[RMDB]
RNA sequence: GGGAACGACUCGAGUAGAGUCGAAAACUCUGCCACCAGGAAGAAUCUUUUUGAAAGGCCUUUAUUCAAUACCCAUUUACAGAAGUCCUUUGUAAGUAGCAACUGGGCUGAAACACCAAGACUAGGAAAAAAAAAUGAAAGCUCUUAUUUCCCAGGACUAUCCGUAAAAUUUCGAUUUUACGGAUAGAAAAGAAACAACAACAACAAC
Reactivity to 2A3 in 0.01 (KOAc 150mM, MgCl2 10mM, bicine 150mM(pH8.5), 24C), signal-to-noise 1, nucleotides 027 to 156: c070u060c010u050g000c020c010a070c020c020a010g090g020a050a050g010a050a070u100c010u000u160u080u170u180g050a150a100a010g000g000c010c000u110u150u100a070u110u190c040a130a070u020a070c030c010c010a010u050u100u050a060c060a010g140a110a020g060u000c000c000u020u100u050g040u020a060a030g010u000a010g090c070a080a080c040u020g010g010g000c000u020g040a050a020a020c010a010c050c020a020a020g020a010c060u020a010g000g030a010a020a000a000a000a160a000a020a300u060g030a050a020a110g050c000u050c000u080u060a050u060u010u000c000c000c000a000g070g000a010
Record summary:
Structure probing data (2A3) for a 207-nucleotide construct. The RNA was probed in 150 mM KOAc, 10 mM MgCl2 and 150 mM bicine (pH 8.5) at 24 C. Reactivities are rounded to 0.1 and cut off at 0 and 3.